[RMDB]
RNA sequence: GGGAACGACUCGAGUAGAGUCGAAAAUAUACCCAAAAUAAUCCGUAGCCAACACAUAAGCAACUUGAAGUAUGAAGGGUAUAUGUCUGAUGGAAAAUCGGCCCUGGUGAGUAGAGUAAUGGCGCCGUCUCUCUGCGAACUUCGGUUCGCAGAGAGAAAAAGAAACAACAACAACAAC
Reactivity to DMS in 0.01 (KOAc 150mM, MgCl2 10mM, bicine 150mM(pH8.5), 24C), signal-to-noise 1, nucleotides 027 to 126: u000a010u000a040c000c000c000a040a110a160a020u010a070a000u000c060c180g010u000a060g060c000c120a060a260c300a130c290a180u010a150a220g000c020a080a050c020u050u030g000a010a090g000u050a020u000g000a130a110g010g000g000u010a010u000a010u000g000u020c000u000g010a060u000g000g040a090a000a090a090u000c040g000g020c020c040c000u070g050g050u000g000a170g000u000a010g090a220g000u000a050a050u010g000g000c000g000c000c010g000
Reactivity to 2A3 in 0.01 (KOAc 150mM, MgCl2 10mM, bicine 150mM(pH8.5), 24C), signal-to-noise 1, nucleotides 027 to 126: u010a000u020a030c000c000c000a090a000a000a000u010a000a030u040c020c000g030u030a000g050c000c000a090a000c030a010c020a210u150a120a000g000c010a000a030c000u090u070g040a040a010g020u090a030u050g050a010a040g000g080g000u000a000u000a000u030g120u030c050u010g020a010u180g000g250a130a000a000a000u080c000g000g000c000c000c000u070g000g030u040g070a130g030u080a070g000a000g110u060a000a110u070g150g050c020g010c000c000g060

Conditions: 150 mM KOAc, 10 mM MgCl2 and 150 mM bicine (pH 8.5), 24 C. Structure probing data (DMS and 2A3) for a 177-nucleotide construct. The DMS profile rests on 1,111 reads. High DMS reactivity at an A or C suggests that its Watson-Crick edge is free. Reactivities are given for positions 27 through 126. For 2A3, 516 sequencing reads were counted.